Notes
Chemical mapping of a 207-nucleotide RNA with DMS and 2A3. For 2A3 the reverse transcriptase was SuperScript II with manganese. The RNA was probed in 150 mM KOAc, 10 mM MgCl2 and 150 mM bicine (pH 8.5) at 24 C. For DMS, 3,880 sequencing reads were counted. It was measured as part of the RMDB library RNAMAK. The 2A3 profile rests on 1,657 reads. DMS adducts were read by reverse transcription with MarathonRT.
RNA sequence: GGGAACGACUCGAGUAGAGUCGAAAACUCACUCUUCGGAGUGAGAAAAAAGCGUACUACCUAUUAAACAGCAGCUACCCACCACCGAUCCCAAAUAGGAUCGGUGAGGCUGAACUACUGUGAUAGGUAUCGCAAAAAAGCGUCUUUCGAGACGCAAUCCUAUCGUAUGGUUCGCCAUACGAUAGGAAAAAGAAACAACAACAACAAC
Reactivity to DMS in 0.01 (KOAc 150mM, MgCl2 10mM, bicine 150mM(pH8.5), 24C), signal-to-noise 1, nucleotides 027 to 156: c010u000c000a030c010u000c020u000u010c300g040g040a070g000u000g000a010g010a020a010a090a060a130a090g000c000g010u000a130c180u000a010c000c000u000a050u000u010a060a080a110c000a010g000c010a010g060c010u000a030c040c000c010a150c050c010a010c000c000g000a000u000c000c000c000a050a140a220u030a060g000g000a000u000c020g000g000u000g000a020g000g020c030u010g010a030a130c010u020a040c020u000g010u000g030a040u000a000g010g040u000a030u000c030g000c000a000a040a110a050a070a120g030c000g010u000c000u000u000u020c230g020a060g000a020c000g010c000a010a030
Reactivity to 2A3 in 0.01 (KOAc 150mM, MgCl2 10mM, bicine 150mM(pH8.5), 24C), signal-to-noise 2, nucleotides 027 to 156: c000u010c000a000c010u010c020u040u070c210g080g000a000g000u000g000a000g030a000a060a000a000a010a020g050c070g050u060a060c010u010a000c030c010u010a010u030u070a300a230a040c000a000g030c010a000g000c040u100a200c030c050c100a040c040c000a000c010c010g000a000u040c050c000c010a140a230a090u270a110g020g010a010u000c000g000g000u020g000a000g000g010c000u020g020a070a020c030u130a060c010u230g010u000g020a010u000a000g000g000u000a010u180c010g000c000a000a120a120a000a000a000g010c020g000u020c010u030u080u080c190g080a040g000a000c000g000c010a000a020